[RMDB]
RNA sequence: GGGAACGACUCGAGUAGAGUCGAAAAUGCUUUUAAUUCAUUCUGCCUGCCACGAAUGUUCUUUUAGACUGUAUGCAUAGAGGAAAAUAGUUCAUCUUACUUGUAUGAAUCUCUGGACAGAGGAACAUAAUCAGUGUAACAAGGGGACCUAACAUAAGGCUAUCCAUAAUUUCGAUUAUGGAUAGCCAAAAGAAACAACAACAACAAC
Reactivity to 2A3 in 0.01 (KOAc 150mM, MgCl2 10mM, bicine 150mM(pH8.5), 24C), signal-to-noise 3, nucleotides 027 to 156: u040g020c040u030u120u110u230a140a070u130u120c030a020u030u020c020u020g050c000c020u030g030c020c010a070c040g020a050a020u060g000u030u010c020u020u130u010u000a100g040a050c050u030g060u100a040u140g050c040a060u070a080g010a010g030g080a000a040a060a090u110a010g030u040u030c030a020u010c020u070u070a170c040u080u140g050u080a020u010g040a020a030u020c020u000c010u070g030g050a030c020a000g010a020g030g000a020a020c000a020u070a070a070u060c060a020g000u020g000u080a060a030c020a050a020g010g000g040g010a010c000c020u060a040a010c030a040u300a050a100
Reactivity to DMS in 0.01 (KOAc 150mM, MgCl2 10mM, bicine 150mM(pH8.5), 24C), signal-to-noise 3, nucleotides 027 to 156: u000g020c040u010u010u000u000a100a150u010u000c020a030u000u010c030u000g000c040c010u000g020c020c070a110c050g010a070a080u000g010u000u010c030u020u000u000u010a140g010a090c040u000g040u010a060u000g030c050a080u000a060g010a070g030g000a040a050a070a080u020a110g000u000u010c070a080u020c040u010u000a100c070u000u000g010u000a040u000g010a070a050u000c010u020c020u000g010g000a150c100a120g010a110g010g000a040a080c030a040u000a050a140u000c050a070g040u000g030u000a070a060c050a060a130g010g010g000g020a060c030c040u000a060a110c050a060u000a080a210